[RMDB]
RNA sequence: GGGAACGACUCGAGUAGAGUCGAAAACGGUAUUCGGAAUCUUGCACGCCCUCGCUCAAGCCUUCGUCACUCCAAACGUUUCGGCGAGAAGCAGGCCAUUAUCGCCGGCAUGGCGGCCGACGCGCUGGACGACAAUACGGUUCGCCGUAUUGUCGUCAAAAGAAACAACAACAACAAC
Reactivity to DMS in 0.01 (KOAc 150mM, MgCl2 10mM, bicine 150mM(pH8.5), 24C), signal-to-noise 1, nucleotides 027 to 126: c070g000g000u000a070u010u000c060g010g000a130a080u000c060u000u000g000c030a100c060g000c060c020c020u000c070g000c030u010c100a070a170g000c030c060u000u000c040g000u000c070a070c060u000c020c060a090a080a080c070g010u000u010u000c060g000g000c000g000a090g000a060a080g000c040a100g010g010c020c060a070u010u000a120u000c150g000c020c030g020g040c120a050u000g000g000c050g020g020c030c010g010a020c070g010c060g030c040u010g040
Reactivity to 2A3 in 0.01 (KOAc 150mM, MgCl2 10mM, bicine 150mM(pH8.5), 24C), signal-to-noise 1, nucleotides 027 to 126: c020g010g050u100a120u060u130c030g030g060a020a060u030c040u070u170g010c050a000c040g010c010c000c000u040c030g000c000u040c010a080a030g010c000c000u040u050c000g060u020c010a040c100u030c030c000a080a070a130c040g000u030u080u060c030g030g000c010g010a050g000a060a020g040c010a020g040g000c000c000a090u240u160a090u130c030g000c020c040g030g050c070a080u110g090g020c050g030g010c010c010g000a020c000g040c020g000c040u060g090

Conditions: 150 mM KOAc, 10 mM MgCl2 and 150 mM bicine (pH 8.5), 24 C. This 177-nucleotide RNA was probed chemically with DMS and 2A3. For DMS, 1,292 sequencing reads were counted. For 2A3 the reverse transcriptase was SuperScript II with manganese. It was measured as part of the RMDB library OK2TRN. For DMS the reverse transcriptase was MarathonRT.